[RMDB]
RNA sequence: GGGAACGACUCGAGUAGAGUCGAAAACGUCGGUCCGCUCGCCGCGCAGCACCUCAAUCAGGUAGCGGCGCUGGUCAACGCAGAUCCCGUCAAGGAUGAACCCUGCCGUGGUGAUCGCUGAGAGCAGCAAAACUUUCACAUUCGUGUGAAAGUUUUGAAAAGAAACAACAACAACAAC
Reactivity to DMS in 0.01 (KOAc 150mM, MgCl2 10mM, bicine 150mM(pH8.5), 24C), signal-to-noise 5, nucleotides 027 to 126: c110g020u000c070g010g000u000c030c060g020c050u010c090g010c000c020g010c020g020c020a050g010c040a050c010c000u020c140a150a140u010c260a060g010g020u000a110g030c010g000g020c000g010c010u020g030g010u000c090a040a110c180g000c020a050g000a110u000c010c010c000g010u000c050a050a080g000g000a180u000g020a120a160c060c020c010u000g000c090c040g020u010g010g000u010g010a110u010c040g020c010u000g000a210g000a060g010c050a100g020
Reactivity to 2A3 in 0.01 (KOAc 150mM, MgCl2 10mM, bicine 150mM(pH8.5), 24C), signal-to-noise 3, nucleotides 027 to 126: c020g050u030c040g030g020u020c010c030g000c040u010c040g010c020c010g000c000g000c020a010g020c010a010c000c010u070c080a190a300u140c010a030g030g010u080a070g060c020g000g000c000g000c010u090g000g000u040c020a000a030c030g010c040a050g010a050u000c000c000c020g020u050c050a110a080g030g000a100u150g110a130a140c010c000c000u010g030c040c010g070u130g050g010u060g010a050u070c030g000c030u030g040a060g010a020g090c020a000g040
An RNA of 177 nucleotides, treated with DMS and 2A3 and read out base by base.
Values cover nucleotides 27 to 126.
Source: RMDB library OK2TST, as collected in RNAgym.
The 2A3 profile rests on 4,116 reads.